RNA sequence: GGGAACGACUCGAGUAGAGUCGAAAAGAUCCAGAUCUUUGGUUUGAAUACCUGGCACAGAAGAACUUCAUCUUACCUGAGGAAAUUAAAAGAUUUGCUCAUGAAAGGGCAUCUGGAUUGACAGGGAAUGUGCCAACGAAUUCGUUCGUUGGCACAUAAAAGAAACAACAACAACAAC
Reactivity to 2A3 in 0.01 (KOAc 150mM, MgCl2 10mM, bicine 150mM(pH8.5), 24C), signal-to-noise 2, nucleotides 027 to 126: g030a020u000c020c020a000g020a040u000c050u010u010u050g000g050u000u110u140g030a050a010u090a130c000c000u010g060g020c150a090c020a130g120a080a000g020a110a070c030u160u000c090a010u040c070u020u050a170c000c000u030g000a030g090g050a050a030a130u020u120a120a280a140a000g190a050u040u100u000g060c000u020c000a040u170g130a140a050a050g000g000g020c020a040u010c020u000g000g030a060u090u090g020a040c000a010g010g020g150a000
Reactivity to DMS in 0.01 (KOAc 150mM, MgCl2 10mM, bicine 150mM(pH8.5), 24C), signal-to-noise 1, nucleotides 027 to 126: g000a030u060c000c010a040g000a010u000c080u010u020u000g010g020u000u000u000g000a210a070u000a090c020c020u000g060g000c030a230c080a170g000a040a090g020a170a070c010u070u050c060a060u040c040u000u000a100c140c030u000g010a010g000g000a020a010a000u010u020a130a070a210a170g010a000u000u040u000g000c020u000c000a020u000g010a050a060a030g000g000g000c180a060u000c010u000g000g000a060u000u000g010a110c040a020g000g020g030a160